[RMDB]
RNA sequence: GGGAACGACUCGAGUAGAGUCGAAAAGAAUGCUGUUCGCAGCAUUCAAAAAGAUAUGGAGCCUCCACUUGUCAGCUACCGUGUGUCGGAAACGACACGGUAGCUUGGAUUUAGUGGAGGGCUCCUAAGUCAAAAAAGCUGUAGUUCGCUACAGCAAACAUAAAUUCCGAUUCGUCGGAAUUUAUGUAAAAGAAACAACAACAACAAC
Reactivity to DMS in 0.01 (KOAc 150mM, MgCl2 10mM, bicine 150mM(pH8.5), 24C), signal-to-noise 1, nucleotides 027 to 156: g020a040a010u000g020c010u000g020u010u000c300g020c030a010g010c010a010u010u000c000a030a040a070a200a090g010a080u010a220u010g020g010a000g020c010c000u000c000c010a030c000u000u010g010u000c010a030g000c010u000a000c010c030g020u010g030u010g020u000c040g020g000a150a060a280c010g030a090c000a040c010g020g000u000a000g000c010u020u020g030g020a040u000u000u010a030g030u000g010g000a010g010g010g020c010u000c000c010u010a000a110g000u040c040a000a160a100a120a170a100g030c000u000g010u000a020g010u000u010c300g050c000u000a000c000a020g010c000a000a080
Reactivity to 2A3 in 0.01 (KOAc 150mM, MgCl2 10mM, bicine 150mM(pH8.5), 24C), signal-to-noise 1, nucleotides 027 to 156: g000a000a000u000g000c000u010g020u050u170c230g010c080a000g010c000a010u000u020c020a000a040a000a000a000g020a030u090a010u060g000g010a000g000c000c000u000c000c010a000c000u010u010g000u010c020a010g000c020u000a000c000c000g040u050g050u050g110u080c040g050g000a100a090a120c010g020a000c010a000c000g000g010u000a000g000c000u000u020g000g020a000u100u190u290a000g000u000g000g000a000g000g000g000c000u000c000c000u000a020a000g000u000c020a040a040a070a070a010a010g000c000u010g000u010a000g010u040u050c150g020c080u000a000c000a000g000c000a030a000